[RMDB]
RNA sequence: GGGAACGACUCGAGUAGAGUCGAAAACUGCCGCCGGGACGCAGUGAUCCUCGCGGGGUCGCACGGUCGCCUCGGGUCGGCCUCGUGUCGGCUCGACCUGCGAGGGGAGCGAGUGGCGAGCCCGACCAAAACUUUCUCGCCUUCGGGCGAGAAAGAACAUCCCUUUUGGCUUCGGCCAAAAGGGAUGAAAAGAAACAACAACAACAAC
Reactivity to 2A3 in 0.01 (KOAc 150mM, MgCl2 10mM, bicine 150mM(pH8.5), 24C), signal-to-noise 1, nucleotides 027 to 156: c020u030g000c020c010g070c000c060g050g070g180a060c030g010c010a100g170u010g010a060u010c000c000u000c000g030c000g000g000g000g070u090c040g000c110a080c120g020g030u000c010g020c050c000u030c030g000g070g010u000c000g030g000c000c000u080c080g300u300g020u020c010g000g000c020u030c040g050a100c000c030u040g030c010g000a000g010g000g010g000a000g000c020g000a060g120u080g010g000c000g000a030g020c050c060c000g010a020c000c040a060a000a000a090c000u000u000u000c000u000c000g000c000c040u020u070c130g060g020g000c000g000a000g000a000a000a000g000a000a020

Notes: This 207-nucleotide RNA was probed chemically with 2A3. For 2A3, 724 sequencing reads were counted. Reactivities are given for positions 27 through 156. The reactions ran in a buffer of 150 mM KOAc, 10 mM MgCl2 and 150 mM bicine (pH 8.5), at 24 C.